[RMDB]
RNA sequence: GGGAACGACUCGAGUAGAGUCGAAAACGCGUCAGAUUCGUCUGACGCGAAAGCAUAGAACAGCGCUAUCAUGUAUUAAAGUUCUAUGCAACUAUAGCGCUAAAACGAUACCGUUCGCGGUAUCGAAGUUCUGCAAUGGAUUCGUCCAUUGCAGAACAAAAGAAACAACAACAACAAC
Reactivity to 2A3 in 0.01 (KOAc 150mM, MgCl2 10mM, bicine 150mM(pH8.5), 24C), signal-to-noise 4, nucleotides 027 to 126: c010g000c010g000u000c000a010g000a030u010u070c120g070u030c090u010g000a010c000g000c010g000a000a000a000g000c000a030u020a040g040a030a020c030a040g010c000g000c030u030a020u140c060a100u190g230u220a110u140u230a170a190a070g030u030u000c020u030a020u030g010c010a000a000c020u050a020u070a090g000c000g020c060u060a040a050a000a070c010g010a000u000a000c020c010g020u030u030c240g000c000g090g000u000a000u000c000g000a030a000
Reactivity to DMS in 0.01 (KOAc 150mM, MgCl2 10mM, bicine 150mM(pH8.5), 24C), signal-to-noise 2, nucleotides 027 to 126: c010g020c010g000u000c000a020g000a030u000u000c220g030u000c000u010g040a010c000g000c010g000a010a060a110g020c030a060u020a000g020a000a030c040a090g050c040g040c030u000a130u000c200a070u000g010u020a090u030u010a040a130a130g020u010u000c030u000a000u000g000c010a060a030c070u000a100u000a030g000c010g010c010u010a060a100a100a120c030g010a020u000a000c010c010g020u000u010c190g020c010g000g010u010a000u010c000g000a040a040

Chemical mapping of a 177-nucleotide RNA with 2A3 and DMS. For DMS, 1,820 sequencing reads were counted. For 2A3 the reverse transcriptase was SuperScript II with manganese. 2A3 is a SHAPE reagent: it acylates the 2'-hydroxyl of flexible nucleotides of all four kinds.